RNA sequence: GGGAACGACUCGAGUAGAGUCGAAAAGUAUAGAAGCAUGAGACCGCAUGCGAUAUACGAUGAAUCUCGGUCGAAUCCGUUGUGCGAAAGCACUUCGGUAAUGCAUAUCGGUAGACAGAUCAGCCCGGAUCAGCUACCGUAAUUAGUACGGGCAAGAGCUAUCCCGUAUAUUCGUAUACGGGAUAGCAAAAGAAACAACAACAACAAC
Reactivity to DMS in 0.01 (KOAc 150mM, MgCl2 10mM, bicine 150mM(pH8.5), 24C), signal-to-noise 2, nucleotides 027 to 156: g000u020a050u000a000g000a240a300g010c010a030u020g010a250g000a200c140c050g070c020a070u000g000c000g000a200u000a010u000a020c000g010a190u000g010a200a170u010c100u010c060g000g010u000c040g010a170a160u000c000c000g040u000u010g030u020g000c010g000a210a120a300g000c000a030c000u000u010c000g040g030u010a060a050u000g000c120a100u000a100u000c000g030g000u000a030g010a070c100a170g010a080u000c010a010g010c010c000c050g000g000a220u000c020a110g010c020u000a010c020c020g000u000a010a050u000u030a130g020u010a030c000g020g000g010c050a080a050g010a120
Reactivity to 2A3 in 0.01 (KOAc 150mM, MgCl2 10mM, bicine 150mM(pH8.5), 24C), signal-to-noise 3, nucleotides 027 to 156: g030u040a010u020a080g080a140a010g000c000a000u000g010a020g040a140c050c000g050c050a000u010g020c010g000a010u010a000u010a030c040g020a020u130g110a080a130u060c070u010c130g000g000u020c020g030a030a060u010c000c000g000u000u000g000u000g010c000g040a060a020a050g020c010a000c000u010u000c020g000g010u040a070a020u110g020c060a060u090a080u250c000g000g000u010a010g040a060c090a030g000a000u000c000a000g010c000c000c010g010g000a000u010c020a010g000c010u000a000c000c000g010u000a010a030u100u100a030g120u080a030c050g000g020g000c040a050a030g030a030
Record summary:
The record gives the reactivity of an RNA of 207 nucleotides to DMS and 2A3. The reactions ran in a buffer of 150 mM KOAc, 10 mM MgCl2 and 150 mM bicine (pH 8.5), at 24 C. For 2A3, 2,876 sequencing reads were counted. The DMS profile rests on 2,457 reads.